[RMDB]
RNA sequence: GGGAACGACUCGAGUAGAGUCGAAAAGAAAAGCGAGUAAAAAGUCCUCAAAAUCGCAGAGGACGUCGCACUCGCAAAACCUACGCGACGGAGAUAGCGAAAAUCUCCAAUAAGUAGCAAAAAAAAACGAAUAACAUAUCUUCGGAUAUGUUAUUCGAAAAGAAACAACAACAACAAC
Reactivity to DMS in 0.01 (KOAc 150mM, MgCl2 10mM, bicine 150mM(pH8.5), 24C), signal-to-noise 2, nucleotides 027 to 126: g020a100a120a200a220g010c030g030a020g000u030a070a110a120a190a110g020u030c010c000u000c000a040a050a030a100u000c070g030c100a120g000a020g010g010a010c030g010u000c050g020c090a020c030u000c000g010c020a010a050a080a140c180c000u000a020c160g010c010g000a030c080g000g030a000g000a010u000a040g040c020g000a090a020a000a010u000c000u000c000c000a100a090u000a070a040g000u000a020g010c100a000a000a000a010a040a070a070a090a150
Reactivity to 2A3 in 0.01 (KOAc 150mM, MgCl2 10mM, bicine 150mM(pH8.5), 24C), signal-to-noise 1, nucleotides 027 to 126: g030a010a100a020a020g010c010g010a000g040u050a010a100a090a070a050g010u020c010c020u010c000a060a070a060a270u270c090g010c050a010g000a010g030g000a000c010g000u010c000g000c010a030c000u000c000g040c020a020a050a000a060c020c000u030a050c050g010c000g020a010c040g000g020a000g000a010u000a010g010c010g060a140a050a020a000u010c000u000c010c000a010a030u040a010a010g100u110a020g030c050a080a000a000a000a000a000a140a070a000

Chemical mapping of a 177-nucleotide RNA with DMS and 2A3. Reactivities are given for positions 27 through 126. For 2A3, 1,700 sequencing reads were counted. It was measured as part of the RMDB library M2PK90. For 2A3 the reverse transcriptase was SuperScript II with manganese. Conditions: 150 mM KOAc, 10 mM MgCl2 and 150 mM bicine (pH 8.5), 24 C. For DMS, 1,109 sequencing reads were counted. DMS adducts were read by reverse transcription with MarathonRT.